[RMDB]
RNA sequence: GGGAACGACUCGAGUAGAGUCGAAAAGAUAUGGAUUAUUCUGGAGAAUCAGCGUAUCGGAAACGAUACGGUUCGAUGAAAGAGAUAAUCCUAAGUCAAAACUGAACAGUCUUCGGACUGUUCAGAACGUUACGUCAUAGUUCGCUAUGACGUAACGAAAAGAAACAACAACAACAAC
Reactivity to DMS in 0.01 (KOAc 150mM, MgCl2 10mM, bicine 150mM(pH8.5), 24C), signal-to-noise 5, nucleotides 027 to 126: g010a010u000a080u010g000g000a010u000u010a000u010u010c000u000g000g010a070g010a140a010u000c020a090g000c010g010u000a000u010c010g010g000a020a010a040c000g010a000u000a000c000g000g000u000u000c110g020a030u000g000a060a100a300g000a020g000a020u000a000a010u000c000c000u000a010a090g000u000c010a080a050a130a190c000u000g000a010a010c000a010g010u000c000u000u010c270g020g010a020c000u000g000u000u000c000a000g000a030a080
Reactivity to 2A3 in 0.01 (KOAc 150mM, MgCl2 10mM, bicine 150mM(pH8.5), 24C), signal-to-noise 5, nucleotides 027 to 126: g010a010u020a000u060g020g000a000u020u010a080u300u270c020u020g100g070a190g240a300a140u010c010a020g080c000g020u000a000u000c000g020g010a000a000a000c010g000a000u000a010c010g000g010u130u050c100g010a040u100g110a000a000a020g030a010g020a000u020a010a010u000c000c000u000a020a000g010u000c000a000a010a120a200c010u000g000a000a000c000a000g000u000c040u060u120c250g150g010a000c000u010g000u000u000c000a000g000a010a010
The record gives the reactivity of an RNA of 177 nucleotides to DMS and 2A3. For 2A3, 12,022 sequencing reads were counted. The RNA was probed in 150 mM KOAc, 10 mM MgCl2 and 150 mM bicine (pH 8.5) at 24 C. Values cover nucleotides 27 to 126. For 2A3 the reverse transcriptase was SuperScript II with manganese. It was measured as part of the RMDB library TTRDEL.